[RMDB]
This 177-nucleotide RNA was probed chemically with DMS and 2A3. Conditions: 150 mM KOAc, 10 mM MgCl2 and 150 mM bicine (pH 8.5), 24 C. For 2A3, 3,398 sequencing reads were counted. It was measured as part of the RMDB library OK2TRN.
RNA sequence: GGGAACGACUCGAGUAGAGUCGAAAAAUUUCGAUGUGGUCACCAGCCAUUGCGAUAAGCGAUGCCGCACUUGCUGCUAUUGCUGUGAUACGAACAUUCACUUUGCCUUUAUGAGCUCUUAAAUGUGUCAAACACAACUUUUCGAAGUUGUGUUUGAAAAAGAAACAACAACAACAAC
Reactivity to DMS in 0.01 (KOAc 150mM, MgCl2 10mM, bicine 150mM(pH8.5), 24C), signal-to-noise 5, nucleotides 027 to 126: a110u000u010u000c050g010a110u020g010u000g010g010u010c030a120c110c090a090g010c040c030a030u000u000g010c010g010a100u010a060a080g000c030g020a060u000g010c070c080g010c050a120c100u010u000g010c060u000g010c050u000a050u000u000g000c020u000g010u010g000a040u000a090c090g020a060a040c110a060u010u000c050a040c060u000u000u000g010c030c040u000u000u000a090u020g000a100g010c060u000c050u000u000a040a070a090u010g000u010g010
Reactivity to 2A3 in 0.01 (KOAc 150mM, MgCl2 10mM, bicine 150mM(pH8.5), 24C), signal-to-noise 4, nucleotides 027 to 126: a020u120u160u110c050g010a030u100g030u040g090g000u050c020a020c070c030a010g000c010c010a010u020u060g020c020g090a100u040a250a030g010c000g040a060u100g090c080c030g010c020a050c050u050u130g010c030u040g010c010u050a040u090u100g020c000u000g050u060g070a030u030a150c050g060a090a000c030a040u060u090c020a040c030u070u100u090g010c000c000u130u200u040a180u200g120a040g040c010u030c020u100u190a110a150a140u190g030u030g040
Reactivities are given for positions 27 through 126.